[RMDB]
RNA sequence: GGGAACGACUCGAGUAGAGUCGAAAAUGUGUUUCAACCAUUCCAGGUAGAUUUGAAUUAAUGUCCGAUUCUUUCACACCUACGUUAUUCAACGUUGCUGCAGAAUAGGUGUUUCAUCAACAAAGAAUGCGAUUAUGGCAUUCGUGCCAUAAUCGCAAAAAGAAACAACAACAACAAC
Reactivity to DMS in 0.01 (KOAc 150mM, MgCl2 10mM, bicine 150mM(pH8.5), 24C), signal-to-noise 1, nucleotides 027 to 126: u000g000u000g020u000u000u010c020a110a020c050c010a130u000u000c040c040a130g010g000u000a060g000a030u010u010u000g000a040a080u010u000a010a020u020g020u010c120c040g010a150u000u000c050u000u000u000c140a110c110a090c040c020u000a010c030g000u010u000a080u010u030c070a030a010c020g020u000u000g010c050u000g000c220a100g030a080a020u020a090g020g040u010g010u000u000u000c040a030u010c120a090a070c110a040a050a140g000a080a090

Notes
The record gives the reactivity of an RNA of 177 nucleotides to DMS. The DMS profile rests on 765 reads.